[RMDB]
This 177-nucleotide RNA was probed chemically with DMS and 2A3.
Source: RMDB library OK2TRN, as collected in RNAgym.
For 2A3, 1,571 sequencing reads were counted.
For 2A3 the reverse transcriptase was SuperScript II with manganese.

RNA sequence: GGGAACGACUCGAGUAGAGUCGAAAAUGGGCAGGGCCGGAUCGAAAUGUUGGCUAGGUAAGCGUCCUGUAGUAAGAGGAGUGGUUAUGAACCCUGUAGACCACCCCCAUGGGGGGGUGAAGGGAGGCCUUACGACAAUUUUCGAAUUGUCGUAAGGAAAAGAAACAACAACAACAAC
Reactivity to DMS in 0.01 (KOAc 150mM, MgCl2 10mM, bicine 150mM(pH8.5), 24C), signal-to-noise 4, nucleotides 027 to 126: u010g020g010g030c030a080g010g010g020c040c040g010g030a060u010c050g020a080a100a080u000g020u000u010g010g010c040u000a050g010g010u000a070a130g010c090g010u000c030c030u010g030u010a050g020u010a060a120g000a070g000g000a070g000u000g010g010u000u010a070u010g000a120a140c030c010c010u000g000u020a140g010a110c130c000a040c010c010c010c010c040a180u010g020g010g030g000g010g000g020u000g000a060a060g000g000g010a110g010g000
Reactivity to 2A3 in 0.01 (KOAc 150mM, MgCl2 10mM, bicine 150mM(pH8.5), 24C), signal-to-noise 2, nucleotides 027 to 126: u070g050g040g020c010a020g000g040g000c010c040g030g050a040u080c050g060a040a040a100u150g020u150u060g110g000c040u020a060g010g020u120a080a030g050c010g050u050c000c030u040g030u030a070g020u030a040a040g000a010g120g000a050g010u060g060g060u110u040a110u210g050a020a030c000c010c010u030g070u040a050g060a050c020c000a010c010c000c000c010c000a100u250g220g030g110g160g000g040g000u010g030a010a000g030g000g010a020g060g040